[RMDB]
RNA sequence: GGGAACGACUCGAGUAGAGUCGAAAAACGGGCAGUGGCGAUGGCAACGCGGCAGCCGCAGGGUCGACUUCUUCGCAGCCGCAACAGACGGGACACGGGCAAAGAGGGGAUCUCGUUCUGUUGGAAGUACUGACUCACCUUUCGAGGUGAGUCAGUAAAAAGAAACAACAACAACAAC
Reactivity to DMS in 0.01 (KOAc 150mM, MgCl2 10mM, bicine 150mM(pH8.5), 24C), signal-to-noise 2, nucleotides 027 to 126: a050c080g000g000g000c040a020g000u000g010g000c060g000a060u020g030g040c070a100a110c160g020c070g000g000c040a050g000c110c030g000c160a100g000g020g000u030c050g000a110c070u050u000c040u030u010c170g010c130a190g000c020c020g010c000a020a000c020a000g000a060c060g000g010g000a010c080a120c040g060g000g000c180a030a100a080g000a160g070g040g000g000a110u000c020u000c000g000u050u000c040u000g000u000u000g000g000a070a020g000
Reactivity to 2A3 in 0.01 (KOAc 150mM, MgCl2 10mM, bicine 150mM(pH8.5), 24C), signal-to-noise 3, nucleotides 027 to 126: a000c010g000g020g000c050a060g040u060g060g000c030g070a090u070g020g030c020a070a070c040g000c000g020g000c020a000g040c020c040g020c020a010g040g030g030u050c060g010a060c040u050u020c030u070u010c050g000c060a010g020c010c000g060c010a010a000c000a000g010a010c000g000g030g000a030c050a020c110g060g040g010c050a090a080a000g090a090g000g020g020g020a060u010c000u000c010g050u170u040c000u010g000u000u010g000g010a050a010g050
An RNA of 177 nucleotides, treated with DMS and 2A3 and read out base by base. The RNA was probed in 150 mM KOAc, 10 mM MgCl2 and 150 mM bicine (pH 8.5) at 24 C. Source: RMDB library OK1LIB, as collected in RNAgym. Values cover nucleotides 27 to 126.